[RMDB]
RNA sequence: GGGAACGACUCGAGUAGAGUCGAAAACAGUAUUUGGCUUAGCAGUAUUAUUACAUUAUAAGAAGGUAUCUAAAUUACUUGUUGUAAUUUUUUCAUUAAUAAUACUUAUAACUAGUGCAUAUCCUUCCGGAUACUCCGAUUUCGAUCGGAGUAUCCGAAAAGAAACAACAACAACAAC
Reactivity to 2A3 in 0.01 (KOAc 150mM, MgCl2 10mM, bicine 150mM(pH8.5), 24C), signal-to-noise 1, nucleotides 027 to 126: c010a010g040u030a020u050u300u290g030g070c040u040u090a010g100c040a000g000u000a000u010u000a000u000u000a040c010a020u140u180a140u210a120a020g120a120a000g100g000u000a000u090c050u220a010a040a080u050u010a010c010u080u150g070u160u060g000u060a000a090u000u000u000u000u020u090c020a020u050u110a010a090u000a000a000u000a000c000u060u170a100u090a210a040c000u000a040g010u040g060c000a020u020a150u210c000c000u140u000c020